[RMDB]
The data come from the RNA Mapping Database (RMDB), library OK2TST. This 177-nucleotide RNA was probed chemically with DMS and 2A3. For DMS the reverse transcriptase was MarathonRT. The reactions ran in a buffer of 150 mM KOAc, 10 mM MgCl2 and 150 mM bicine (pH 8.5), at 24 C.
RNA sequence: GGGAACGACUCGAGUAGAGUCGAAAAUGAAUGUCCAGUAACAAAUUUGGAGGAAGCGUAUAUGUAUCAAACAAUUAUUAUCGGAGGCGGACCUAGCGGCUUAAUGGCGGCAGUAGCUGCAAGCGAAGUCCGAAUGAUAUUUCGAUAUCAUUCGGACAAAAGAAACAACAACAACAAC
Reactivity to DMS in 0.01 (KOAc 150mM, MgCl2 10mM, bicine 150mM(pH8.5), 24C), signal-to-noise 3, nucleotides 027 to 126: u000g020a150a100u000g010u010c020c020a090g010u000a070a130c150a040a040a160u000u010u000g010g010a040g010g010a090a130g030c070g000u000a060u000a070u010g010u000a070u000c100a080a040a090c070a040a120u000u000a110u010u000a080u000c070g000g000a080g010g020c050g020g000a040c070c010u000a060g030c020g000g030c010u000u010a040a080u000g010g010c050g010g030c020a100g010u000a030g030c010u000g010c050a030a060g010c070g000a080a110
Reactivity to 2A3 in 0.01 (KOAc 150mM, MgCl2 10mM, bicine 150mM(pH8.5), 24C), signal-to-noise 2, nucleotides 027 to 126: u070g040a040a050u090g010u010c010c000a060g040u110a050a060c080a090a160a080u170u120u130g050g000a090g000g040a000a070g060c070g080u140a070u000a030u230g060u050a110u100c060a050a100a050c030a100a090u190u100a090u150u060a000u230c020g000g030a010g060g000c010g000g020a000c000c010u040a030g030c010g050g030c020u020u050a070a010u150g050g010c000g000g000c000a000g010u020a010g010c050u100g010c020a010a010g070c020g120a140a040